[RMDB]
The data come from the RNA Mapping Database (RMDB), library OK1LIB. Chemical mapping of a 177-nucleotide RNA with DMS and 2A3.
RNA sequence: GGGAACGACUCGAGUAGAGUCGAAAACGGCAAAGGAGUUCGUGCAAGUGAGGCUUCCAAGGCAGCUAGUUGCAUUUCCAUUUCACUUGUAGUUUGUGUACGACCUAAUGGAGAAGCGCCCAACCAACGUAAUGAUCCGUUUCGACGGAUCAUUACGAAAAGAAACAACAACAACAAC
Reactivity to DMS in 0.01 (KOAc 150mM, MgCl2 10mM, bicine 150mM(pH8.5), 24C), signal-to-noise 2, nucleotides 027 to 126: c080g010g010c040a020a090a130g010g000a070g000u020u010c060g010u000g030c020a070a060g010u000g010a060g000g000c020u000u020c000c050a120a160g010g030c120a000g020c130u010a040g030u020u000g000c130a060u020u010u020c000c050a070u000u030u000c050a030c050u000u020g000u000a060g010u000u000u000g030u010g010u030a140c030g020a090c030c080u020a040a010u000g000g020a100g000a030a130g000c130g000c010c010c000a080a050c130c100a040a210
Reactivity to 2A3 in 0.01 (KOAc 150mM, MgCl2 10mM, bicine 150mM(pH8.5), 24C), signal-to-noise 6, nucleotides 027 to 126: c020g050g000c040a040a040a150g060g010a090g040u170u130c050g030u050g050c020a020a030g010u070g050a020g070g000c000u090u010c060c030a050a040g090g000c010a040g020c030u080a050g080u070u090g000c020a030u050u090u000c030c020a060u040u100u050c030a030c020u000u040g010u020a070g060u030u150u110g130u030g030u050a050c040g030a050c010c010u060a060a060u050g040g000a060g000a080a000g020c000g020c010c000c000a020a040c030c030a030a080
The RNA was probed in 150 mM KOAc, 10 mM MgCl2 and 150 mM bicine (pH 8.5) at 24 C.